[RMDB]
Overview:
This 207-nucleotide RNA was probed chemically with 2A3. The 2A3 profile rests on 813 reads. Values cover nucleotides 27 to 156. Conditions: 150 mM KOAc, 10 mM MgCl2 and 150 mM bicine (pH 8.5), 24 C.

RNA sequence: GGGAACGACUCGAGUAGAGUCGAAAAAGGAUCACCUUGCUAAGACUCAUGGCGCAGGCCAGGAGGAUGUCUUCCGCGGGAGCUAGGGGCAGGUCGCCGUGGUAGGUGAUCUCCUGGAGCCAAAAGAUGGUCUCUUCUAGCAUGGCCACCAGGGUGCCCCUCUACGCAAGUUCGCUUGCGUAGAGGGAAAAGAAACAACAACAACAAC
Reactivity to 2A3 in 0.01 (KOAc 150mM, MgCl2 10mM, bicine 150mM(pH8.5), 24C), signal-to-noise 2, nucleotides 027 to 156: a000g050g000a020u060c010a030c020c000u030u090g000c070u060a060a000g050a040c010u020c090a060u070g020g000c050g020c160a060g000g210c010c010a010g040g030a060g080g090a100u160g010u010c000u040u000c010c000g020c010g030g020g000a050g080c030u080a090g030g040g040g040c050a020g050g080u030c040g070c130c000g030u000g020g000u020a010g040g000u010g070a020u020c000u000c000c000u020g010g000a020g030c000c000a080a090a010a030g060a030u120g060g090u080c030u020c030u100u060c030u080a110g080c040a090u090g010g040c110c010a130c020c000a060g020g030g040u100g000c000